[RMDB]
RNA sequence: GGGAACGACUCGAGUAGAGUCGAAAAUACUAGCAUUCGGUUCCAACCCUGCAUGGAUACUCAAAGGUUGGCUGAGUUCCUUCCUCCGGCCUUGGUUCCGAUGCUCCAUCCAAGGCCGGAAACCAAAGACUAUAAUCGAGUUCGCUCGAUUAUAGUCAAAAGAAACAACAACAACAAC
Reactivity to 2A3 in 0.01 (KOAc 150mM, MgCl2 10mM, bicine 150mM(pH8.5), 24C), signal-to-noise 3, nucleotides 027 to 126: u120a020c060u020a010g030c020a060u060u080c020g050g000u090u050c020c010a030a030c020c000c030u030g040c060a110u090g070g070a110u110a220c060u060c130a070a080a020g040g000u030u030g020g020c030u040g040a020g040u020u020c010c000u060u100c010c040u000c000c010g000g000c000c000u010u000g020g000u100u050c030c000g010a030u100g030c030u000c020c010a040u050c000c000a010a010g000g000c020c000g000g000a000a000a000c010c000a050a030a030
Reactivity to DMS in 0.01 (KOAc 150mM, MgCl2 10mM, bicine 150mM(pH8.5), 24C), signal-to-noise 4, nucleotides 027 to 126: u000a100c100u010a050g010c050a060u010u000c050g010g020u010u010c040c040a050a050c040c010c060u000g020c130a100u000g000g000a110u000a070c080u000c030a060a100a090g000g000u010u000g010g020c130u000g010a080g000u000u000c010c010u000u020c130c060u000c000c010g010g000c010c000u000u000g010g000u010u000c050c040g000a070u000g010c030u000c080c060a060u000c010c000a020a010g000g020c000c000g000g000a000a010a070c140c160a050a080a110